[RMDB]
RNA sequence: GGGAACGACUCGAGUAGAGUCGAAAACGUAAUACAGUGAGUGGACGGAACAAAUCCCCUUCCCACCUCCCCACUGUCCACUCACUGUCUUCCUAAGAGGAAAUAUAAAUCGGGGGUGGGAAGGGGAACCUCCACUCCUAUUCGUAGGAGUGGAGGUAAAAGAAACAACAACAACAAC
Reactivity to 2A3 in 0.01 (KOAc 150mM, MgCl2 10mM, bicine 150mM(pH8.5), 24C), signal-to-noise 6, nucleotides 027 to 126: c050g080u110a080a020u210a210c000a000g000u000g000a000g010u000g000g010a010c030g010g040a060a030c030a040a120a130u140c000c000c000c000u000u000c000c010c000a000c000c000u010c020c050c040c050a040c010u020g000u000c000c010a010c000u010c000a000c000u000g010u000c000u010u000c000c000u030a090a030g060a080g170g190a030a150a000u300a040u110a050a140a070u240c120g010g010g000g000g000u000g000g010g000a000a000g000g000g000g000a000
Reactivity to DMS in 0.01 (KOAc 150mM, MgCl2 10mM, bicine 150mM(pH8.5), 24C), signal-to-noise 1, nucleotides 027 to 126: c300g000u050a280a020u090a060c000a000g010u010g010a020g000u000g000g000a010c000g000g000a030a070c210a140a040a030u000c000c020c000c000u000u000c000c000c010a000c000c000u050c010c000c150c030a170c210u020g020u010c000c000a000c000u000c030a000c000u010g000u000c010u000u010c000c020u000a020a070g000a100g040g000a150a050a080u030a060u020a010a060a110u060c240g000g020g000g000g030u000g030g010g000a020a000g000g010g020g000a100
Background: Chemical mapping of a 177-nucleotide RNA with 2A3 and DMS. For 2A3 the reverse transcriptase was SuperScript II with manganese. The RNA was probed in 150 mM KOAc, 10 mM MgCl2 and 150 mM bicine (pH 8.5) at 24 C. For DMS, 1,693 sequencing reads were counted. As a SHAPE reagent, 2A3 marks flexible, mostly unpaired nucleotides at the ribose 2'-OH.